RNA sequence: GGGAACGACUCGAGUAGAGUCGAAAAGUUAGGUGAGGCGGCUACACGAACAUAGGCCACUGACCCCGAACGUCGAGAGACGCCCCGGGUCAGGACAGCUCUUCCCUGCUUAAGGGUUGAGCCCAGGUAUCACCCUGGCUAUUCGUAGCCAGGGUAAGAAUGUUAUACUAUUCGUAGUAUAACAUUCAAAAGAAACAACAACAACAAC
Reactivity to DMS in 0.01 (KOAc 150mM, MgCl2 10mM, bicine 150mM(pH8.5), 24C), signal-to-noise 3, nucleotides 027 to 156: g000u000u000a040g020g020u000g000a090g020g020c050g020g020c010u000a080c060a110c040g000a080a110c100a130u000a150g040g000c000c000a150c000u000g000a030c010c000c000c060g010a040a010c010g010u000c020g010a300g010a300g010a030c000g020c010c000c040c180g020g010g010u000c000a010g010g000a100c090a070g000c010u010c000u000u000c000c020c010u000g020c180u000u030a090a040g030g010g020u000u000g010a050g020c000c020c050a080g010g000u010a100u000c080a090c000c010c010u000g000g020c000u000a020u000u010c210g010u000a040g030c000c010a000g000g010g000u000a000a040
Reactivity to 2A3 in 0.01 (KOAc 150mM, MgCl2 10mM, bicine 150mM(pH8.5), 24C), signal-to-noise 4, nucleotides 027 to 156: g080u090u080a040g040g070u030g020a030g020g060c040g020g010c040u090a030c060a020c080g110a130a010c070a140u200a090g050g000c010c020a030c010u010g010a010c000c000c020c040g030a060a010c000g010u000c000g000a030g000a010g000a140c000g010c010c040c010c010g020g000g000u010c000a000g000g030a030c030a010g000c000u000c000u010u010c000c010c000u010g010c080u130u200a070a040g000g000g000u000u010g000a000g000c000c030c000a050g000g070u090a080u240c050a010c000c010c000u000g010g000c000u020a030u050u080c190g060u050a000g010c000c000a000g010g000g000u000a000a010
Chemical mapping of a 207-nucleotide RNA with DMS and 2A3. For DMS the reverse transcriptase was MarathonRT. The data come from the RNA Mapping Database (RMDB), library M2RFPK. The RNA was probed in 150 mM KOAc, 10 mM MgCl2 and 150 mM bicine (pH 8.5) at 24 C. 2A3 adducts were read by reverse transcription with SuperScript II with manganese.